[RMDB]
RNA sequence: GGGAACGACUCGAGUAGAGUCGAAAAGAUAUGGAUCCGACCCAGCGAAACGAGGUGGGUCGGAAACGACCCACUACCCACCGGAACCGCUGCGGAUCCUAAGUCAAAAGCCCUGUUCGCAGGGCAAGAAUUAGUAUGUGUUCGCACAUACUAAUUCAAAAGAAACAACAACAACAAC
Reactivity to DMS in 0.01 (KOAc 150mM, MgCl2 10mM, bicine 150mM(pH8.5), 24C), signal-to-noise 7, nucleotides 027 to 126: g000a030u000a200u010g000g010a010u000c000c000g010a230c250c300c080a020g010c000g020a070a080a180c080g000a130g010g010u000g000g000g010u000c010g010g000a000a010a060c000g010a010c000c000c010a010c000u000a030c070c040c090a300c160c060g000g000a090a130c170c030g010c020u010g000c020g010g000a010u000c000c000u000a010a060g000u010c030a080a080a120a160g000c000c000c000u000g000u000u010c170g000c010a000g000g010g000c010a010a010
Reactivity to 2A3 in 0.01 (KOAc 150mM, MgCl2 10mM, bicine 150mM(pH8.5), 24C), signal-to-noise 3, nucleotides 027 to 126: g000a000u030a010u060g000g000a000u000c000c020g050a130c220c100c030a000g000c000g080a250a090a160c080g000a030g010g040u000g000g000g010u000c000g000g020a000a000a000c000g000a000c000c010c000a010c010u030a010c020c020c020a130c090c050g080g090a170a120c130c010g000c000u020g010c020g000g000a000u010c010c000u010a030a020g020u010c020a000a000a120a160g010c010c000c000u010g020u030u110c300g000c030a000g000g000g000c010a010a010